The record gives the reactivity of an RNA of 177 nucleotides to 2A3 and DMS.
The reactions ran in a buffer of 150 mM KOAc, 10 mM MgCl2 and 150 mM bicine (pH 8.5), at 24 C.
Values cover nucleotides 27 to 126.
[RMDB]
RNA sequence: GGGAACGACUCGAGUAGAGUCGAAAACCCACGUGGUUCGCCACGUGGGAAAUAAAUUCAGCGGUAAUUCGAGGCCAAAUAUUACCGGUGAUGGCCUCGAAAAAAGUACACAGUUCGCUGUGUACAACUAGUGUACUGUCUUCGGACAGUACACUAGAAAAGAAACAACAACAACAAC
Reactivity to 2A3 in 0.01 (KOAc 150mM, MgCl2 10mM, bicine 150mM(pH8.5), 24C), signal-to-noise 2, nucleotides 027 to 126: c020c020c000a000c000g000u000g010g050u060u050c170g060c060c000a000c010g010u050g000g000g020a010a080a040u130a010a050a040u130u080c030a030g070c070g130g080u110a090a150u030u000c000g010a010g000g000c010c000a000a030a020u170a050u110u130a090c020c030g030g020u040g020a050u030g000g000c000c000u010c010g000a000a010a000a000a010a000g000u000a000c020a000c010a000g020u080u090c120g040c150u000g000u000g010u010a000c000a020a000
Reactivity to DMS in 0.01 (KOAc 150mM, MgCl2 10mM, bicine 150mM(pH8.5), 24C), signal-to-noise 2, nucleotides 027 to 126: c000c000c000a000c020g050u000g000g030u000u030c170g010c000c000a000c000g030u000g000g010g000a000a020a030u000a050a080a100u010u010c040a060g000c080g010g020u010a090a160u000u000c000g010a010g000g020c000c000a020a050a080u010a130u010u010a120c050c040g000g000u000g000a110u000g010g000c000c010u000c010g000a000a030a030a080a020a070g010u000a000c000a020c010a030g010u010u010c210g010c000u000g010u010g010u000a010c010a080a110
It was measured as part of the RMDB library M2PK50.